[RMDB]
RNA sequence: GGGAACGACUCGAGUAGAGUCGAAAAGAAUCACCGUACCUAUUUAGGUUUACGCUCCAAGAUCGGUGGAUAGCAGCCGUAUCAAUAUCUAGGAGAACUGUGCUAUGUUUAGAAGAUUAGGUAGUCUAUUACACAGCCAUGUUCGCAUGGCUGUGAACGUUAUUGUAGUCUUCGGACUACAAUAACGAAAAGAAACAACAACAACAAC
Reactivity to 2A3 in 0.01 (KOAc 150mM, MgCl2 10mM, bicine 150mM(pH8.5), 24C), signal-to-noise 5, nucleotides 027 to 156: g060a010a090u120c040a030c100c030g040u040a010c000c000u060a160u210u200u200a050g020g020u020u030u100a030c040g020c010u020c010c020a110a030g010a020u010c020g010g010u040g020g120a060u070a040g040c050a000g000c000c010g070u150a070u070c040a070a050u080a040u180c070u090a090g020g010a030g010a040a070c060u090g020u030g080c020u020a030u060g070u050u070u050a160g030a210a040g000a110u110u070a040g070g070u010a020g050u060c030u030a110u070u110a050c000a000c000a000g010c010c000a000u010g040u050u040c080g020c130a000u000g020g000c000u000g000u000g000a010a000
Reactivity to DMS in 0.01 (KOAc 150mM, MgCl2 10mM, bicine 150mM(pH8.5), 24C), signal-to-noise 4, nucleotides 027 to 156: g020a080a070u000c000a200c040c010g030u010a050c020c000u000a200u010u010u000a040g020g010u010u000u010a040c030g010c030u000c020c010a100a130g010a020u000c020g030g030u000g010g000a100u000a070g010c060a300g030c030c010g010u000a110u000c030a100a110u010a100u000c100u000a130g000g000a080g000a120a080c090u000g020u000g020c040u000a080u010g020u000u000u000a100g010a130a120g020a110u000u000a070g020g030u000a090g020u010c040u000a140u000u000a160c010a010c000a020g010c000c020a030u000g020u000u000c270g010c010a030u010g010g010c010u000g020u000g020a020a070